This 207-nucleotide RNA was probed chemically with DMS and 2A3. The reactions ran in a buffer of 150 mM KOAc, 10 mM MgCl2 and 150 mM bicine (pH 8.5), at 24 C. 2A3 is a SHAPE reagent: it acylates the 2'-hydroxyl of flexible nucleotides of all four kinds.

RNA sequence: GGGAACGACUCGAGUAGAGUCGAAAAAACAGAACAUGCCUAAAAUUAUUUUUCCCAACUGUGGUAAUCAAAGGCAUAGGGAAAAACCGAGAAGAAAAAUAAAAUCCUUCCUCAUGAACUCAGGAGUAGAGAAAAUGUGUUACCCUCUAACAGUGCACCGUAUUAGGGUAUUCGUACCCUAAUACGGAAAAGAAACAACAACAACAAC
Reactivity to DMS in 0.01 (KOAc 150mM, MgCl2 10mM, bicine 150mM(pH8.5), 24C), signal-to-noise 1, nucleotides 027 to 156: a070a190c030a200g010a140a100c050a070u020g010c010c010u000a050a110a060a040u000u000a120u000u000u000u010u000c000c010c040a270a110c070u010g000u000g010g000u000a040a050u000c070a010a180a080g010g010c000a020u000a140g020g030g010a090a060a060a120a100c040c010g000a050g010a060a060g020a010a030a030a020a130u000a080a060a120a130u020c030c010u000u000c010c000u000c040a100u010g000a050a060c030u010c030a030g010g030a100g030u000a070g000a100g050a090a040a040a080u000g030u010g000u000u010a030c030c020c010u020c070u010a090a050c020a140g030u010g030c080a140
Reactivity to 2A3 in 0.01 (KOAc 150mM, MgCl2 10mM, bicine 150mM(pH8.5), 24C), signal-to-noise 2, nucleotides 027 to 156: a000a000c030a000g050a040a030c020a040u040g000c010c010u080a120a170a190a030u130u080a160u020u110u000u030u000c000c000c000a040a030c050u050g050u140g080g100u090a020a150u120c070a120a090a040g050g010c010a000u040a060g000g000g000a050a080a020a030a030c130c060g080a060g080a090a000g040a050a040a110a050a030u180a040a080a050a000u080c010c010u020u020c010c000u050c020a000u090g050a080a040c020u020c100a040g030g020a040g060u120a010g030a010g030a050a060a030a050u060g060u010g060u020u060a120c000c040c000u080c040u020a040a020c050a050g070u040g040c030a020